[RMDB]
RNA sequence: GGGAACGACUCGAGUAGAGUCGAAAAAAAAAGAGCGUAAUCGCGUCAUUGAGUGACGUGAAGAUCAUCCAAGUGUGCUGUCUACAGUCGUAGAUAGCGCACAAUACGCUGAUGAUGAUUCAAAAAACUCAACAUCAGGAUUCGUCCUGAUGUUGAGAAAAGAAACAACAACAACAAC
Reactivity to 2A3 in 0.01 (KOAc 150mM, MgCl2 10mM, bicine 150mM(pH8.5), 24C), signal-to-noise 4, nucleotides 027 to 126: a000a000a000a000a000g080a000g010c030g030u040a050a040u050c010g000c000g000u020c010a030u080u300g220a110g260u030g010a010c000g000u000g010a020a020g040a020u040c010a010u010c000c030a140a130g000u000g010u020g010c000u000g000u000c000u010a040c060a300g220u290c160g010u140a000g000a000u000a000g000c010g000c000a000c000a000a000u030a010c010g000c030u010g010a010u050g000a000u010g010a010u060u190c130a060a050a010a060a070a070
Reactivity to DMS in 0.01 (KOAc 150mM, MgCl2 10mM, bicine 150mM(pH8.5), 24C), signal-to-noise 3, nucleotides 027 to 126: a040a040a040a060a050g020a270g010c000g000u000a060a090u000c000g020c000g010u000c010a060u000u010g000a110g020u000g010a000c010g020u000g010a040a040g000a070u000c010a020u010c020c050a080a120g020u000g010u000g000c010u000g010u000c010u000a000c000a140g010u030c210g020u000a000g000a000u000a000g010c000g030c010a000c000a060a050u000a020c020g010c040u010g010a190u000g000a050u000g000a050u010u010c060a020a070a050a070a090a080